[RMDB]
Structure probing data (DMS and 2A3) for a 177-nucleotide construct.
Reactivities are given for positions 27 through 126.
For 2A3 the reverse transcriptase was SuperScript II with manganese.
Source: RMDB library TTRDES, as collected in RNAgym.
For 2A3, 9,080 sequencing reads were counted.
RNA sequence: GGGAACGACUCGAGUAGAGUCGAAAAGAUAUGGAGAGAUGAGGGAGCACCGAUCGGAAACGAUCGAAGUGCGAGGAUCUCAUACUCUCCUAAGUCAAAUGUCCCUUACGGUUCGCCGUAAGGGACAGUUAUUGCAGCAGUUCGCUGCUGCAAUAACAAAAGAAACAACAACAACAAC
Reactivity to DMS in 0.01 (KOAc 150mM, MgCl2 10mM, bicine 150mM(pH8.5), 24C), signal-to-noise 2, nucleotides 027 to 126: g010a000u000a110u000g000g000a000g010a030g000a030u000g000a010g010g020g020a110g020c010a010c010c010g010a010u000c010g010g000a030a020a050c010g000a010u000c000g000a100a100g010u000g010c010g010a100g010g000a090u000c000u000c000a020u000a080c000u010c000u000c000c000u000a000a080g000u000c020a070a130a220u000g000u000c000c000c000u010u000a000c000g010g000u000u010c300g000c020c010g010u000a000a000g010g010g010a000c000a020
Reactivity to 2A3 in 0.01 (KOAc 150mM, MgCl2 10mM, bicine 150mM(pH8.5), 24C), signal-to-noise 3, nucleotides 027 to 126: g010a000u020a020u060g000g000a000g000a000g000a000u020g010a010g030g030g030a070g000c000a000c040c010g020a010u000c010g030g030a020a020a010c010g020a000u000c000g030a300a090g010u000g020c020g010a120g020g030a040u000c010u000c000a020u110a190c010u000c000u010c000c000u000a000a000g010u000c010a030a050a280u160g000u000c010c010c000u000u010a010c010g010g110u030u100c300g050c150c000g010u000a000a000g000g000g000a000c000a010

Annotation:
Conditions: 150 mM KOAc, 10 mM MgCl2 and 150 mM bicine (pH 8.5), 24 C. The DMS profile rests on 3,845 reads.